[RMDB]
RNA sequence: GGGAACGACUCGAGUAGAGUCGAAAACGGUAUCUACCACCCGCCGCAUUUCGUACAGAAGGUGGUCAGUGCCAACGGCCAGGUCCUCUUCGACGCCAGCACCGCGGACAACACCGGCGAUCAGCGCGGGAACCUAUCGCUUCGGCGAUAGGUUCCCAAAAGAAACAACAACAACAAC
Reactivity to 2A3 in 0.01 (KOAc 150mM, MgCl2 10mM, bicine 150mM(pH8.5), 24C), signal-to-noise 1, nucleotides 027 to 126: c060g000g020u030a040u040c080u030a020c000c000a040c060c070c010g050c160c000g100c000a140u140u260u110c040g080u160a090c000a270g000a040a010g000g030u050g020g030u060c050a000g000u000g150c000c060a020a000c120g010g000c000c000a000g020g020u030c000c030u070c000u150u110c000g010a000c050g030c010c000a000g000c050a000c050c000g000c000g000g140a050c020a120a000c000a060c000c000g000g000c000g110a060u000c020a010g000c020g020c040
Record summary:
The record gives the reactivity of an RNA of 177 nucleotides to 2A3. It was measured as part of the RMDB library OK1LIB. The reactions ran in a buffer of 150 mM KOAc, 10 mM MgCl2 and 150 mM bicine (pH 8.5), at 24 C. Values are in units of 0.01, from 0 to 300, in steps of 10.